[RMDB]
Source: RMDB library OK3TST, as collected in RNAgym.
An RNA of 207 nucleotides, treated with DMS and 2A3 and read out base by base.
Reactivities are given for positions 27 through 156.
For DMS, 7,368 sequencing reads were counted.
RNA sequence: GGGAACGACUCGAGUAGAGUCGAAAAAGACAGCAAGGAAGAAGCUAGAGUCCUGGCUGCCCUGAUAGGUGACUCACGCUGUGUAAACAGGUUCACAAAGGAUUAGGAAAAAAUUGCUGGGUGAUGAAGGGAAGCUUCAGUGGUGCCAGCCUAGGGAAGCUGGUAUGUAAUUCGUUACAUACCAGCUAAAAGAAACAACAACAACAAC
Reactivity to DMS in 0.01 (KOAc 150mM, MgCl2 10mM, bicine 150mM(pH8.5), 24C), signal-to-noise 3, nucleotides 027 to 156: a050g030a080c030a170g040c020a060a040g000g020a110a080g000a110a080g000c020u000a050g000a160g010u000c000c010u000g040g030c010u000g010c000c020c000u000g020a100u000a060g000g020u010g020a110c050u010c040a110c080g060c030u010g000u000g030u000a080a080a090c010a070g000g010u000u010c040a070c060a090a110a130g010g010a130u010u000a140g040g010a000a070a090a090a070a120u000u000g010c010u000g000g020g000u000g030a090u010g000a090a070g010g000g020a100a110g020c040u000u000c040a070g000u000g020g010u000g000c020c010a070g020c040c030u000a090g000g010g010a110
Reactivity to 2A3 in 0.01 (KOAc 150mM, MgCl2 10mM, bicine 150mM(pH8.5), 24C), signal-to-noise 4, nucleotides 027 to 156: a020g040a040c050a020g020c030a060a030g060g040a050a060g040a080a000g050c030u060a030g020a020g120u030c010c010u010g050g010c010u030g060c020c000c000u040g050a070u090a140g040g010u030g040a030c020u030c080a020c090g100c010u030g010u040g040u180a040a070a020c030a030g050g000u050u060c040a020c040a100a100a030g050g020a030u090u140a070g070g010a050a050a040a010a010a080u090u110g030c030u020g020g050g010u050g030a080u070g070a050a020g020g010g000a050a020g010c000u040u050c040a040g020u030g080g000u030g040c000c020a000g010c000c010u040a030g000g000g050a020